Structure probing data (2A3 and DMS) for a 177-nucleotide construct.
[RMDB]
RNA sequence: GGGAACGACUCGAGUAGAGUCGAAAAGCUCGGAGACGAGCAAGGCUGACAAAACAGUGUCCCAACCUCCACGUGGUGUCGGCUGGAUAAUGCUGCAUUAUGUUGCAUUUAUCAACUGGGAACAAAAGGAUGACUAUGGAUUCGUCCAUAGUCAUCCAAAAGAAACAACAACAACAAC
Reactivity to 2A3 in 0.01 (KOAc 150mM, MgCl2 10mM, bicine 150mM(pH8.5), 24C), signal-to-noise 6, nucleotides 027 to 126: g000c000u000c000g010g030a090g010a060c000g000a000g020c010a000a010g060g000c000u010g000a030c030a020a120a100a040c070a080g070u050g100u120c010c000c000a000a030c010c010u040c020c020a120c110g080u120g030g010u020g020u020c000g010g020c010u020g020g000a010u000a030a000u010g000c010u020g000c020a110u170u110a160u300g020u010u040g000c010a010u020u070u130a040u020c010a000a030c060u030g000g000g040a030a030c030a050a070a020a020
Reactivity to DMS in 0.01 (KOAc 150mM, MgCl2 10mM, bicine 150mM(pH8.5), 24C), signal-to-noise 2, nucleotides 027 to 126: g030c000u000c000g000g000a170g020a260c000g020a020g000c010a070a010g000g080c000u000g000a030c050a070a060a140a080c110a140g000u000g000u000c000c020c000a110a110c040c030u000c010c020a070c110g060u000g000g000u000g010u000c040g000g000c020u000g020g000a040u000a000a000u010g000c020u000g000c000a260u010u010a150u040g060u010u000g010c000a030u000u020u020a020u020c030a070a040c080u020g000g000g030a010a040c170a000a080a100a170
Reactivities are given for positions 27 through 126. It was measured as part of the RMDB library OK1LIB. High 2A3 reactivity points to a flexible backbone, as in loops and unpaired stretches. The DMS profile rests on 2,456 reads.